[RMDB]
RNA sequence: GGGAACGACUCGAGUAGAGUCGAAAACGUACCAGUGCACCACCAAGGCCAGAUCUGGGCCGUCUUUGUAGUCGUGGUCCGCGGACCGAUCGAGCCAUGCGUGCAGUUUGAGGACCGCAUAGUUCGGCGUUGACGUUGGGUUCGCCCAACGUCAACGAAAAGAAACAACAACAACAAC
Reactivity to DMS in 0.01 (KOAc 150mM, MgCl2 10mM, bicine 150mM(pH8.5), 24C), signal-to-noise 1, nucleotides 027 to 126: c170g000u000a050c050c010a070g030u030g020c080a050c000c040a120c130c160a110a070g020g010c000c100a180g010a070u000c040u000g060g010g020c030c010g030u000c030u020u000u010g010u010a060g000u000c040g070u000g000g000u050c020c060g000c060g000g000a020c030c050g000a030u000c030g000a300g010c000c050a050u020g050c060g000u040g000c050a110g010u000u000u010g010a120g010g000a130c020c000g010c000a060u000a090g030u000u010c070g010g000
Reactivity to 2A3 in 0.01 (KOAc 150mM, MgCl2 10mM, bicine 150mM(pH8.5), 24C), signal-to-noise 1, nucleotides 027 to 126: c030g060u070a010c000c010a030g050u010g100c030a000c000c000a000c060c020a150a140g040g010c070c050a020g050a060u060c160u300g030g020g010c020c000g000u000c060u100u190u250g060u090a120g120u050c090g020u070g000g030u000c010c010g030c030g030g000a030c000c000g010a030u090c000g000a030g000c010c050a010u050g000c040g070u080g000c000a010g010u030u040u200g120a110g030g020a020c000c080g100c000a060u050a070g050u030u060c030g000g000